[RMDB]
RNA sequence: GGGAACGACUCGAGUAGAGUCGAAAAUUAGUCUUCGGACUAACACUGACCUUUGUGCCUUUGUCAGCUCCGCCCGUGCACACCCAUUGGGUGUGAACUACACGUAACAAGAGCUUGGAUUUAAGGCACUCUGGUUCCGGACAGCAUUCGUGCUGAAUACAAGCAUCGAUUUCGAUCGAUGCUUGUAAAAAGAAACAACAACAACAAC
Reactivity to 2A3 in 0.01 (KOAc 150mM, MgCl2 10mM, bicine 150mM(pH8.5), 24C), signal-to-noise 2, nucleotides 027 to 156: u010u000a050g000u010c020u060u070c300g040g030a000c000u010a020a010c060a000c000u010g030a020c000c000u000u000u000g000u000g000c030c010u000u000u030g000u010c000a000g000c020u020c000c030g100c010c030c000g000u000g000c000a000c000a000c090c000c000a300u250u300g010g000g000u010g000u010g010a000a000c050u140a030c000a000c020g130u200a300a040c070a140a050g000a000g000c060u160u250g140g020a080u300u300u070a000a000g010g000c000a000c000u000c030u000g010g000u000u000c000c000g050g080a090c020a000g000c000a020u040u090c300g130u050g000c000u010g010a090a000
Chemical mapping of a 207-nucleotide RNA with 2A3.
The reactions ran in a buffer of 150 mM KOAc, 10 mM MgCl2 and 150 mM bicine (pH 8.5), at 24 C.
2A3 adducts were read by reverse transcription with SuperScript II with manganese.